[RMDB]
RNA sequence: GGGAACGACUCGAGUAGAGUCGAAAACGACAGGUCCUCGGCCGGAUCCGCCUGGCAGAGCGAACCGCCCAGGGUGCCGCGGUUGCGGACCACCGGGUCGGCGAUCACCCGCUCGGCAUCGCGGAAGCGCGCAUUAUGAGUUCGCUCAUAAUGCGCGAAAAGAAACAACAACAACAAC
Reactivity to DMS in 0.01 (KOAc 150mM, MgCl2 10mM, bicine 150mM(pH8.5), 24C), signal-to-noise 2, nucleotides 027 to 126: c130g000a070c170a050g020g010u000c040c020u000c060g020g000c050c020g000g000a110u000c030c020g000c050c050u010g020g000c030a070g030a050g010c110g010a050a100c040c030g000c010c010c000a130g000g010g010u010g010c000c010g000c030g020g030u000u020g000c000g000g020a060c040c020a140c100c040g000g010g020u000c060g010g010c030g020a080u000c070a100c140c040c000g000c040u000c030g020g020c090a040u000c160g000c040g000g010a060a110g020
Reactivity to 2A3 in 0.01 (KOAc 150mM, MgCl2 10mM, bicine 150mM(pH8.5), 24C), signal-to-noise 2, nucleotides 027 to 126: c030g090a010c030a020g060g030u030c010c000u030c040g020g000c020c000g030g020a090u010c020c010g050c000c000u000g050g000c020a030g010a010g000c050g040a080a050c010c020g010c000c010c000a030g110g000g000u080g070c030c020g030c020g140g140u150u250g000c020g000g020a040c060c040a020c020c020g080g000g030u130c060g070g000c010g040a060u110c030a030c060c020c010g010c020u020c010g000g010c020a090u070c080g020c010g040g040a050a010g100